RNA sequence: GGGAACGACUCGAGUAGAGUCGAAAAGAUCAAUUCUGGGUGACUACUGUCAUCACUGAUUUCAAAGUUCGCCAGCAAUGUUCUGACUUUUGGAAUCAAUCUCAGGCAUGUCCUAGUCCAUUGCUAAGUAAUUACUAAUAUUCGUAUUAGUAAUUACAAAAGAAACAACAACAACAAC
Reactivity to DMS in 0.01 (KOAc 150mM, MgCl2 10mM, bicine 150mM(pH8.5), 24C), signal-to-noise 9, nucleotides 027 to 126: g000a080u010c130a090a130u010u000c050u000g010g010g010u000g000a070c020u010a110c240u010g010u010c020a030u000c070a080c130u010g000a020u000u000u000c010a020a040a050g010u000u000c210g020c300c030a030g010c150a080a070u010g010u010u010c060u010g010a020c020u000u000u000u000g010g000a020a010u000c020a030a100u010c070u000c060a060g000g010c110a060u000g000u000c020c030u000a080g010u000c040c030a070u000u010g000c050u000a070a190
Reactivity to 2A3 in 0.01 (KOAc 150mM, MgCl2 10mM, bicine 150mM(pH8.5), 24C), signal-to-noise 9, nucleotides 027 to 126: g040a050u110c050a030a130u220u010c050u120g010g020g010u020g020a010c010u220a090c080u300g020u030c010a010u020c030a030c080u030g010a020u010u020u050c030a050a030a030g030u060u060c100g130c160c020a010g000c030a060a130u050g020u110u090c050u080g030a030c000u100u130u080u060g020g020a010a010u030c020a020a050u030c050u030c080a060g050g020c050a040u090g030u040c000c020u020a020g030u000c030c010a050u040u090g030c010u060a170a040
This 177-nucleotide RNA was probed chemically with DMS and 2A3. For DMS the reverse transcriptase was MarathonRT.